The record gives the reactivity of an RNA of 177 nucleotides to DMS and 2A3. The RNA was probed in 150 mM KOAc, 10 mM MgCl2 and 150 mM bicine (pH 8.5) at 24 C. For 2A3, 582 sequencing reads were counted. For DMS, 2,567 sequencing reads were counted.
[RMDB]
RNA sequence: GGGAACGACUCGAGUAGAGUCGAAAAGAUUUUAUUGUUUGAACUUUAUGGUGCUUUUUCUGCUGUUACAUGGUUCAUGUUUGAGUGGAAUGGGUCAUCUACCGUGUGGUGAUUCUCGAACGGCUCAGGACGAACAAGGCUUCGGCUUUGUUCGUCCAAAAGAAACAACAACAACAAC
Reactivity to DMS in 0.01 (KOAc 150mM, MgCl2 10mM, bicine 150mM(pH8.5), 24C), signal-to-noise 2, nucleotides 027 to 126: g000a090u040u030u010u020a020u000u030g030u020u000u000g020a120a110c070u000u000u000a110u000g010g040u000g000c020u020u000u010u010u000c030u020g000c050u020g070u000u040a040c070a060u000g000g020u020u020c080a020u010g010u000u000u000g000a020g020u030g000g010a050a020u000g000g010g000u000c030a000u000c030u010a090c110c020g050u000g000u070g060g000u000g010a100u020u000c020u000c030g010a100a000c120g010g030c000u010c110a180
Reactivity to 2A3 in 0.01 (KOAc 150mM, MgCl2 10mM, bicine 150mM(pH8.5), 24C), signal-to-noise 1, nucleotides 027 to 126: g080a040u060u150u100u070a140u010u100g050u140u010u070g130a100a050c000u060u130u100a070u070g000g000u020g020c000u000u000u040u070u010c000u000g020c000u000g070u170u020a000c000a040u120g080g140u080u140c080a020u110g110u020u100u050g090a020g020u020g000g010a000a070u000g000g000g070u070c000a000u000c080u020a030c000c050g030u050g000u020g080g000u090g120a020u060u000c010u010c030g030a070a020c000g030g000c000u010c160a000